[RMDB]
RNA sequence: GGGAACGACUCGAGUAGAGUCGAAAAUGGUUGAGCACAUCGAUAAAUUCACUCUCACGCUGAAUAUCUUUAAGAUUACGACCCAAGUGCCAAUCGGCAGUGUGCAAUACUUUUAGCUUACGCAUGCGUGUUCAAUACGGUUCGCCGUAUUGAACACAAAAGAAACAACAACAACAAC
Reactivity to DMS in 0.01 (KOAc 150mM, MgCl2 10mM, bicine 150mM(pH8.5), 24C), signal-to-noise 3, nucleotides 027 to 126: u000g010g010u000u000g000a280g010c040a020c030a060u000c100g000a100u000a040a100a070u020u010c050a080c040u000c160u010c100a060c110g000c110u000g010a050a050u010a040u000c030u010u000u000a060a080g010a090u000u000a090c130g000a110c020c050c030a090a100g010u010g030c070c030a070a030u010c070g000g000c030a070g030u000g000u010g000c040a050a090u000a050c070u000u000u000u000a060g000c090u010u010a070c230g020c060a040u000g020c100
Reactivity to 2A3 in 0.01 (KOAc 150mM, MgCl2 10mM, bicine 150mM(pH8.5), 24C), signal-to-noise 3, nucleotides 027 to 126: u120g010g000u030u040g010a010g000c020a000c010a050u060c010g050a010u080a070a160a030u080u040c030a070c010u050c010u040c040a020c080g020c050u010g050a080a010u070a030u070c030u030u230u090a130a050g010a070u060u130a080c060g050a060c050c000c000a040a020g020u020g000c000c000a010a080u080c020g030g000c070a060g000u020g000u010g060c000a000a060u040a070c030u110u110u060u160a030g000c020u050u060a030c070g020c050a040u020g070c010